RNA sequence: GGGAACGACUCGAGUAGAGUCGAAAAGAUAUGGAAGGCUAAGAGCAUGAACUACACCGUCGGAAACGACGGAUGCAUGCUCCCUAGCCUUCCUAAGUCAAAAGGAUGGACGUUCGCGUCCAUCCAAGUGUCUUACGUUGUUCGCAACGUAAGACACAAAAGAAACAACAACAACAAC
Reactivity to 2A3 in 0.01 (KOAc 150mM, MgCl2 10mM, bicine 150mM(pH8.5), 24C), signal-to-noise 1, nucleotides 027 to 126: g000a020u050a030u150g030g000a020a000g020g000c000u010a000a050g010a000g020c010a010u000g000a110a030c020u150a080c160a040c050c000g000u000c000g020g060a070a070a100c020g000a000c000g050g010a010u010g010c000a010u010g000c000u000c070c000c000u010a000g000c010c000u000u000c000c000u010a010a000g000u000c040a000a060a140a050g030g000a000u000g000g010a010c000g000u070u040c300g040c000g160u060c000c000a000u000c000c000a010a000
Reactivity to DMS in 0.01 (KOAc 150mM, MgCl2 10mM, bicine 150mM(pH8.5), 24C), signal-to-noise 2, nucleotides 027 to 126: g000a050u000a300u010g000g010a010a010g000g010c000u000a060a110g010a020g000c010a000u010g000a090a070c120u010a300c120a050c010c000g050u000c000g010g000a130a060a170c010g010a020c000g000g000a020u000g000c020a020u000g000c020u000c060c120c130u000a010g000c000c000u000u010c000c000u000a000a050g000u000c020a050a050a060a170g010g000a010u000g000g000a030c010g090u000u000c230g000c010g000u010c000c010a000u000c000c010a010a050
Conditions: 150 mM KOAc, 10 mM MgCl2 and 150 mM bicine (pH 8.5), 24 C. This 177-nucleotide RNA was probed chemically with 2A3 and DMS. Source: RMDB library TTRDEL, as collected in RNAgym. For DMS the reverse transcriptase was MarathonRT. The DMS profile rests on 1,773 reads. Values cover nucleotides 27 to 126.